RNA sequence: GGGAACGACUCGAGUAGAGUCGAAAAUCCUCGAUUCGGACCGGCUCAUCUCGACAAGAGGCGGCGGUCCUCAGUGCUCUUACUCUUUUCUGAAAAGAGGAGACUGCUGGACUCGCCGCCCCAGUUCGAGCAUGAGCCAAUUGCCGAACGAGGAUGGGUAGCCGUGUAAGUUCGCUUACACGGCUACAAAAGAAACAACAACAACAAC
Reactivity to 2A3 in 0.01 (KOAc 150mM, MgCl2 10mM, bicine 150mM(pH8.5), 24C), signal-to-noise 1, nucleotides 027 to 156: u000c000c020u000c050g170a300u000u010c000g000g040a010c090c020g000g000c000u000c020a010u000c000u000c000g000a030c070a120a060g100a080g030g000c000g000g010c000g020g020u020c020c010u000c000a000g000u120g240c040u020c010u060u180a170c010u000c020u000u080u110u150c230u290g130a090a030a000a060g010a000g020g000a000g010a000c000u030g090c090u020g000g000a000c030u020c240g000c000c010g000c000c000c000c000a080g010u080u010c010g000a000g000c090a000u000g000a040g010c000c000a000a000u000u000g020c000c000g000a000a000c010g000a000g000g000a000u010g010g010

Structure probing data (2A3) for a 207-nucleotide construct. Reactivities are rounded to 0.1 and cut off at 0 and 3. Conditions: 150 mM KOAc, 10 mM MgCl2 and 150 mM bicine (pH 8.5), 24 C. Source: RMDB library VIROID, as collected in RNAgym. Values cover nucleotides 27 to 156.